Annotation: Structure probing data (DMS and 2A3) for a 177-nucleotide construct.
[RMDB]
RNA sequence: GGGAACGACUCGAGUAGAGUCGAAAAGACUCAAGGCACCUACACGAACGGACGGUUCGUGUCUCUCCCUAAGAUCGGGAGUAGCAGGGCAUAGGUUGGAAGAGAAACCUUUUGUGAAAAUGAUUUCUCUUACUAUCAUCUUCGGAUGAUAGUAAGAAAAAGAAACAACAACAACAAC
Reactivity to DMS in 0.01 (KOAc 150mM, MgCl2 10mM, bicine 150mM(pH8.5), 24C), signal-to-noise 7, nucleotides 027 to 126: g000a120c020u000c030a120a120g030g020c060a070c030c010u020a040c020a020c010g010a020a020c020g020g030a150c240g000g000u000u000c000g010u000g000u010c070u000c010u000c000c000c000u020a130a110g030a130u020c250g020g000g000a020g000u010a050g020c170a080g010g000g000c050a110u010a050g010g000u000u010g000g010a130a090g010a110g000a080a080a050c040c030u010u010u010u020g000u000g010a070a040a050a120u000g010a220u000u010u000c050
Reactivity to 2A3 in 0.01 (KOAc 150mM, MgCl2 10mM, bicine 150mM(pH8.5), 24C), signal-to-noise 7, nucleotides 027 to 126: g030a010c010u020c050a030a070g080g000c020a100c160c010u020a010c000a000c010g010a020a000c020g050g300a060c120g170g000u000u000c000g000u000g000u000c010u010c000u000c000c020c010u130a200a130g060a230u180c050g010g000g030a010g010u040a020g010c070a050g010g040g000c040a060u070a080g030g040u020u050g080g050a130a050g040a020g020a080a040a050c010c000u020u060u050u060g120u020g080a110a100a060a080u110g110a170u010u040u000c010